The record gives the reactivity of an RNA of 177 nucleotides to 2A3 and DMS. It was measured as part of the RMDB library OK1LIB. 2A3 adducts were read by reverse transcription with SuperScript II with manganese. For DMS, 775 sequencing reads were counted. For 2A3, 692 sequencing reads were counted. Values are in units of 0.01, from 0 to 300, in steps of 10.
RNA sequence: GGGAACGACUCGAGUAGAGUCGAAAAAGUCCAUGUGCACUUCUGCUAUUUUUCAGGGGCCGCCUGCGGUUGCAUCGUCAUCAACAUCUGCAGAGUGCUGCGCACAGCGGCUUCGAUGACGGCAGCCAGUGACAGCCUGGUUCGCCAGGCUGUCACUAAAAGAAACAACAACAACAAC
Reactivity to 2A3 in 0.01 (KOAc 150mM, MgCl2 10mM, bicine 150mM(pH8.5), 24C), signal-to-noise 2, nucleotides 027 to 126: a000g110u070c020c010a060u170g070u080g100c030a030c070u110u100c060u040g000c010u080a160u040u230u030u120u100c010a080g030g030g020g040c080c060g000c030c000u120g050c040g000g000u020u030g030c010a070u230c090g120u020c000a020u030c050a070a130c000a020u050c000u100g000c020a030g070a070g130u060g070c090u060g000c090g030c000a030c000a070g000c000g000g000c000u120u090c040g000a000u020g010a020c000g020g000c000a000g020c000c050
Reactivity to DMS in 0.01 (KOAc 150mM, MgCl2 10mM, bicine 150mM(pH8.5), 24C), signal-to-noise 1, nucleotides 027 to 126: a060g100u010c050c000a080u060g000u000g080c110a200c130u020u000c070u000g000c040u000a130u000u060u000u000u010c030a020g000g010g010g000c020c080g020c050c300u000g140c000g040g030u000u000g000c000a140u090c050g000u000c000a000u030c090a120a250c300a020u060c050u010g000c010a200g000a060g000u000g090c000u000g000c230g000c120a000c190a230g000c100g000g000c050u000u000c300g000a040u060g000a000c000g000g000c030a070g000c000c010